[RMDB]
This 177-nucleotide RNA was probed chemically with DMS and 2A3. Values cover nucleotides 27 to 126. 2A3 adducts were read by reverse transcription with SuperScript II with manganese.
RNA sequence: GGGAACGACUCGAGUAGAGUCGAAAACAAAGGAAAAGCUUUUAUUUUCUAUUGUGCAAGGUAAGCAAAAAAGGAUCCAGCUUAGGUAAAAAGAAACAUGUCUUACAGCCAGAGUUUACACUCCAUAAAUUGAUGGGAGAUUCGUCUCCCAUCAAUUAAAAGAAACAACAACAACAAC
Reactivity to DMS in 0.01 (KOAc 150mM, MgCl2 10mM, bicine 150mM(pH8.5), 24C), signal-to-noise 4, nucleotides 027 to 126: c030a030a070a300g000g000a010a020a050a080g000c160u000u050u030u040a090u020u010u020u000c000u000a140u000u000g000u000g010c120a080a070g000g020u010a020a050g040c100a000a000a090a070a100a110g030g020a090u010c050c040a060g010c050u000u010a050g000g010u010a010a060a080a060a040g000a050a110a100c150a050u010g020u000c020u010u000a050c100a110g010c030c040a080g000a130g000u000u000u010a020c090a040c080u010c000c050a080u020a060
Reactivity to 2A3 in 0.01 (KOAc 150mM, MgCl2 10mM, bicine 150mM(pH8.5), 24C), signal-to-noise 4, nucleotides 027 to 126: c000a000a040a050g060g010a060a030a020a010g020c050u150u120u090u110a150u110u060u090u010c030u030a280u080u180g060u060g060c020a040a030g060g020u160a080a030g050c080a040a070a040a030a000a000g030g030a020u050c010c010a030g000c080u080u080a040g000g040u100a130a110a020a010a000g060a000a080a000c040a050u050g060u050c020u010u060a010c000a000g010c010c010a020g010a010g050u020u040u130a030c080a040c010u020c050c020a060u110a170